[RMDB]
RNA sequence: GGGAACGACUCGAGUAGAGUCGAAAAGAUAUGGAUACGUUGACGAUGGGACGUUGAAAUCGGAAACGAUGGAGUCCACAUUAUCAGUAUCCUAAGUCAAAGGACAAGUACUUCGGUACUUGUCCAAGGCAUUGAUUUUGUUCGCAAAAUCAAUGCCAAAAGAAACAACAACAACAAC
Reactivity to DMS in 0.01 (KOAc 150mM, MgCl2 10mM, bicine 150mM(pH8.5), 24C), signal-to-noise 1, nucleotides 027 to 126: g020a080u020a300u000g000g010a020u000a040c000g020u000u030g010a030c000g000a000u010g000g020g000a070c000g000u000u010g090a090a130a020u000c000g000g000a150a070a200c000g050a000u000g000g000a100g000u000c000c000a060c000a010u010u000a000u000c000a180g000u000a000u000c000c000u000a050a170g010u000c040a060a160a270g000g010a020c000a010a000g000u000a000c000u000u010c260g000g030u000a000c000u000u000g000u010c000c010a010a020

Description:
This 177-nucleotide RNA was probed chemically with DMS. Values cover nucleotides 27 to 126. The RNA was probed in 150 mM KOAc, 10 mM MgCl2 and 150 mM bicine (pH 8.5) at 24 C.